[RMDB]
RNA sequence: GGGAACGACUCGAGUAGAGUCGAAAAGGGUCAGGGGGCGCAGAUCGGCGCUCGGGCCGCCGACGCCCAGCAGAUCUAUGCCCAGCAGAAAGUCGCGGCACAGCCCGCCGCCUUCGCGCCGCAGCACAGUAUUACACCCGUUCGCGGGUGUAAUACUAAAAGAAACAACAACAACAAC
Reactivity to DMS in 0.01 (KOAc 150mM, MgCl2 10mM, bicine 150mM(pH8.5), 24C), signal-to-noise 2, nucleotides 027 to 126: g000g000g010u000c070a190g020g000g010g000g010c030g010c180a040g000a040u000c030g010g000c110g010c060u000c140g010g000g010c000c040g030c110c110g020a060c190g000c010c010c010a110g000c020a030g000a040u000c000u010a050u010g000c030c010c010a160g050c110a140g010a050a070a140g010u000c200g020c020g020g030c030a100c100a130g000c050c030c020g000c090c090g000c040c010u010u000c080g010c100g010c010c060g010c030a120g030c150a060c150

Structure probing data (DMS) for a 177-nucleotide construct.
In probing experiments dimethyl sulfate is read out at A N1 and C N3, which are open when not base-paired.
It was measured as part of the RMDB library OK2TRN.
The reactions ran in a buffer of 150 mM KOAc, 10 mM MgCl2 and 150 mM bicine (pH 8.5), at 24 C.
For DMS, 1,229 sequencing reads were counted.
Values cover nucleotides 27 to 126.